Structure probing data (DMS and 2A3) for a 177-nucleotide construct. The reactions ran in a buffer of 150 mM KOAc, 10 mM MgCl2 and 150 mM bicine (pH 8.5), at 24 C. The 2A3 profile rests on 5,613 reads.
RNA sequence: GGGAACGACUCGAGUAGAGUCGAAAAGAUAUGGAGUGUGAGAGCUUUUGACGGAGCACUAUCGGAAACGAUAGAAUGCUCCGAUAAGCUCCACACUCCUAAGUCAAAAGUGCAGUUCGCUGCACAACGUGAAGGAAAGGUUCGCCUUUCCUUCACGAAAAGAAACAACAACAACAAC
Reactivity to DMS in 0.01 (KOAc 150mM, MgCl2 10mM, bicine 150mM(pH8.5), 24C), signal-to-noise 2, nucleotides 027 to 126: g000a040u010a300u000g000g010a020g030u000g020u010g020a200g010a010g000c000u000u000u010u000g000a300c070g010g000a010g050c000a130c000u010a010u000c000g000g000a110a080a170c010g000a000u000a000g020a120a080u000g010c000u000c000c000g020a020u010a020a020g000c000u000c000c000a010c020a000c010u010c000c000u000a000a050g000u010c030a100a140a120a170g010u000g000c010a020g000u030u020c260g020c010u010g010c000a010c010a040a070
Reactivity to 2A3 in 0.01 (KOAc 150mM, MgCl2 10mM, bicine 150mM(pH8.5), 24C), signal-to-noise 3, nucleotides 027 to 126: g020a000u030a020u080g000g000a010g010u020g010u020g030a300g010a010g170c040u060u160u260u300g280a220c220g000g010a000g000c000a000c010u000a000u000c000g030g040a070a040a010c030g010a000u020a000g060a130a090u030g010c010u000c000c000g010a000u000a010a000g000c010u000c000c000a000c010a000c010u000c000c000u000a000a000g000u000c000a030a060a000a040g000u010g000c000a010g030u050u200c230g090c190u010g000c020a000c020a000a020